This 177-nucleotide RNA was probed chemically with DMS. In probing experiments dimethyl sulfate is read out at A N1 and C N3, which are open when not base-paired. For DMS the reverse transcriptase was MarathonRT. The DMS profile rests on 1,645 reads. Values cover nucleotides 27 to 126.
[RMDB]
RNA sequence: GGGAACGACUCGAGUAGAGUCGAAAAGAUAUGGAUAGUACAUUAAGAUUAAUGAGGAGCAACAGCCUCGGGUCGGAAACGACCCAGAGGACAUGCUCCCAUUAAUCUUAAUGUACUAUCCUAAGUCGCUAUCUAUACACUUCGGUGUAUAGAUAGCAAAAGAAACAACAACAACAAC
Reactivity to DMS in 0.01 (KOAc 150mM, MgCl2 10mM, bicine 150mM(pH8.5), 24C), signal-to-noise 2, nucleotides 027 to 126: g000a100u000a300u000g000g000a020u010a000g020u000a020c000a000u010u000a010a010g010a000u000u000a010a010u000g010a150g040g020a050g000c000a030a110c270a300g030c010c010u000c000g010g000g020u000c000g000g000a190a070a190c010g000a010c000c000c000a020g050a030g020g000a030c090a070u000g020c010u000c000c000c000a010u000u000a010a000u000c000u010u000a000a000u010g000u000a000c000u000a000u000c000c000u000a000a130g000u010c120